RNA sequence: GGGAACGACUCGAGUAGAGUCGAAAAGCAAAGUCUGUCUAUGUAUUAUGAGAUAGCUACUUCUAUGGCUAGGAUAUAUGUUGUACAAGACCGGCUUUUCUUCUACUUCUUGCACAACCUGAGGUUAUAUUGACUGUACUUUCGAGUACAGUCAAUAAAAAGAAACAACAACAACAAC
Reactivity to 2A3 in 0.01 (KOAc 150mM, MgCl2 10mM, bicine 150mM(pH8.5), 24C), signal-to-noise 9, nucleotides 027 to 126: g020c020a030a030a020g010u000c010u010g010u000c020u020a280u050g030u000a030u160u050a070u180g110a070g050a160u030a010g040c010u040a060c070u170u220c070u170a150u190g020g000c010u000a020g030g090a050u010a010u010a020u220g100u120u050g010u030a010c010a060a000g000a000c000c010g010g000c000u000u000u010u000c000u010u000c000u020a050c010u050u060c010u030u090g050c120a040c020a150a110c020c010u060g040a060g060g050u100u070a090
Reactivity to DMS in 0.01 (KOAc 150mM, MgCl2 10mM, bicine 150mM(pH8.5), 24C), signal-to-noise 7, nucleotides 027 to 126: g030c040a070a080a100g000u000c010u000g000u000c000u010a050u000g020u010a030u010u010a050u020g010a190g000a140u000a010g010c000u000a100c190u020u020c210u030a160u010g000g010c000u000a010g000g010a130u010a040u010a020u010g010u010u010g010u020a020c010a020a040g010a010c040c200g010g000c010u000u000u010u000c010u020u000c020u020a020c040u010u010c010u010u000g010c090a060c110a080a100c020c030u010g000a080g010g010u010u020a120